An RNA of 207 nucleotides, treated with 2A3 and read out base by base. For 2A3 the reverse transcriptase was SuperScript II with manganese. Reactivities are given for positions 27 through 156.
RNA sequence: GGGAACGACUCGAGUAGAGUCGAAAAAGUUCCUACAAAGGAUCGGACUAAUGACGUAUACAAUACUUGAAUUCUCGAUGUAGAUGCUACAUAGUUGGUUCUCAUCCUUCAGAGACUACGAGUGUAAUAAGAGCAUCCGUCGACAAAAGGAUCACCCGGUUGCCUAUCCGUUCGCGGAUAGGCAACCAAAAGAAACAACAACAACAAC
Reactivity to 2A3 in 0.01 (KOAc 150mM, MgCl2 10mM, bicine 150mM(pH8.5), 24C), signal-to-noise 2, nucleotides 027 to 156: a000g020u060u030c000c000u020a060c070a010a110a020g110g000a040u060c040g080g050a070c030u140a120a080u050g040a020c080g040u060a110u000a090c120a200a060u050a090c030u060u150g030a180a090u160u070c050u060c070g010a010u010g010u050a060g010a000u000g000c020u000a000c000a010u100a040g010u030u050g050g030u200u020c000u000c010a100u120c060c000u110u190c080a080g000a000g000a000c020u010a020c030g040a110g180u010g020u060a050a100u110a260a040g090a020g080c020a000u000c000c000g000u000c010g000a010c070a010a120a020a040g050g110a030u060c000a040c010c010c000